[RMDB]
RNA sequence: GGGAACGACUCGAGUAGAGUCGAAAACUAUCAGGUCGCUAGUGAAGCCGCCUUUGGCACCCCUGAAUCUCAGCAGAUGCCUAUCUAUGAAGAAUUCGUCGGCUUUGCUGAGAACUGGUUUAUCCAAUCCGUAAGCUUCGUUCGCGAAGCUUACGGAAAAAGAAACAACAACAACAAC
Reactivity to DMS in 0.01 (KOAc 150mM, MgCl2 10mM, bicine 150mM(pH8.5), 24C), signal-to-noise 1, nucleotides 027 to 126: c020u000a060u000c090a050g040g050u000c190g020c200u000a080g000u000g020a050a040g070c000c080g010c080c080u000u000u000g000g080c190a140c080c150c040c040u020g000a110a130u000c060u000c000a040g020c000a020g020a030u010g020c010c030u030a080u000c090u010a020u000g020a110a190g000a130a140u020u010c130g000u000c130g020g000c000u000u000u010g020c020u020g020a090g000a040a040c300u000g000g000u000u000u010a110u000c070c020a050a040